Chemical mapping of a 177-nucleotide RNA with DMS and 2A3. The data come from the RNA Mapping Database (RMDB), library OK2TST.

[RMDB]
RNA sequence: GGGAACGACUCGAGUAGAGUCGAAAAAUACACGCCCUGUCACCAGUUGGAAAGGGCGGGUUGAUAUUUCUUCGCCAGCACCAGCAACACCAAUGAUGAUAGAUUCACCCCAACCUUUGUGGCAGCAAGGAUGUAGAGAAUUCGUUCUCUACAUCCUAAAAGAAACAACAACAACAAC
Reactivity to DMS in 0.01 (KOAc 150mM, MgCl2 10mM, bicine 150mM(pH8.5), 24C), signal-to-noise 8, nucleotides 027 to 126: a060u000a040c040a080c020g010c000c000c000u000g010u000c130a110c020c090a220g020u010u000g020g010a120a100a030g000g000g010c010g000g000g020u010u000g010a130u000a080u010u000u000c050u000u000c070g010c040c030a070g010c040a060c030c030a050g020c030a040a050c060a080c050c040a040a060u000g000a050u000g000a100u000a060g000a130u010u000c060a120c040c010c020c030a060a110c080c050u000u000u000g020u000g000g010c050a060g010c130a090
Reactivity to 2A3 in 0.01 (KOAc 150mM, MgCl2 10mM, bicine 150mM(pH8.5), 24C), signal-to-noise 5, nucleotides 027 to 126: a000u100a000c020a010c010g020c010c000c020u020g070u070c020a050c090c040a220g170u300u190g170g030a220a050a020g000g000g000c030g030g000g000u050u090g050a050u020a140u120u090u010c050u080u070c030g040c030c020a020g010c020a010c010c010a010g030c010a030a030c010a040c060c020a050a070u100g030a040u050g020a010u050a110g090a060u070u060c010a080c000c010c010c000a010a050c010c020u040u080u080g060u050g030g000c020a010g030c010a050

Record summary:
The reactions ran in a buffer of 150 mM KOAc, 10 mM MgCl2 and 150 mM bicine (pH 8.5), at 24 C.